This 177-nucleotide RNA was probed chemically with 2A3 and DMS. Values are in units of 0.01, from 0 to 300, in steps of 10. DMS adducts were read by reverse transcription with MarathonRT. For 2A3 the reverse transcriptase was SuperScript II with manganese. Source: RMDB library OK2TRN, as collected in RNAgym. For 2A3, 2,694 sequencing reads were counted.
[RMDB]
RNA sequence: GGGAACGACUCGAGUAGAGUCGAAAAGCACCGCCGCAGUGCAGCCAACCCCCUACCGCACACACGCUGCCCGAGCCUGCUUCUGUCGCAGUCGUACCCGGUCCGGGGCCGGACCCGGGUAGGCGUAAUAAUGAUCAUGGUUCGCCAUGAUCAUUAUAAAAGAAACAACAACAACAAC
Reactivity to 2A3 in 0.01 (KOAc 150mM, MgCl2 10mM, bicine 150mM(pH8.5), 24C), signal-to-noise 1, nucleotides 027 to 126: g020c000a020c020c060g100c020c010g000c060a020g010u050g060c010a010g040c060c050a080a180c030c050c000c010c000u020a030c020c000g010c030a010c000a000c000a020c070g020c030u020g000c000c020c000g010a000g050c000c030u010g010c000u050u010c010u090g080u040c030g000c070a030g000u020c020g080u030a020c000c000c000g020g000u020c000c020g100g000g150g000c140c010g040g000a040c080c160c010g020g000g000u000a010g000g000c000g020u000a010
Reactivity to DMS in 0.01 (KOAc 150mM, MgCl2 10mM, bicine 150mM(pH8.5), 24C), signal-to-noise 7, nucleotides 027 to 126: g020c040a060c050c050g020c050c050g000c060a100g000u010g020c030a110g010c050c060a110a210c030c020c000c020c030u000a080c070c050g010c050a070c080a100c120a060c060g010c040u000g000c030c020c030g000a090g000c050c020u000g010c030u000u000c030u000g010u000c070g010c090a070g010u000c020g010u000a030c010c010c000g000g000u000c010c010g010g010g010g030c140c030g010g010a030c050c040c020g010g000g020u000a010g010g010c030g000u000a070